[RMDB]
This 177-nucleotide RNA was probed chemically with 2A3. The data come from the RNA Mapping Database (RMDB), library OK1LIB.
RNA sequence: GGGAACGACUCGAGUAGAGUCGAAAACAGUAAACCCAACUUGAGGCGCAUCUUCACCUGCGGGAAGAGCAAAAGCACAGUGAGGUCGCAUUCGUCACCAUCAAGCAUUUUGGCAUGAAAUGCAUUAUGGGGUAAUGUCUUUCGAGACAUUACCCCAAAAAGAAACAACAACAACAAC
Reactivity to 2A3 in 0.01 (KOAc 150mM, MgCl2 10mM, bicine 150mM(pH8.5), 24C), signal-to-noise 2, nucleotides 027 to 126: c050a020g040u130a030a030a000c010c000c000a010a100c010u080u120g030a000g030g020c020g000c010a090u000c020u120u050c050a040c060c010u030g000c030g030g050g020a110a010g150a020g080c060a000a020a120a050g120c030a010c030a080g000u020g120a030g030g040u020c040g000c060a050u080u060c030g040u000c000a040c090c000a060u120c070a090a030g000c000a020u000u000u000u100g150g100c020a030u090g050a010a100a000u030g020c010a020u090u090a080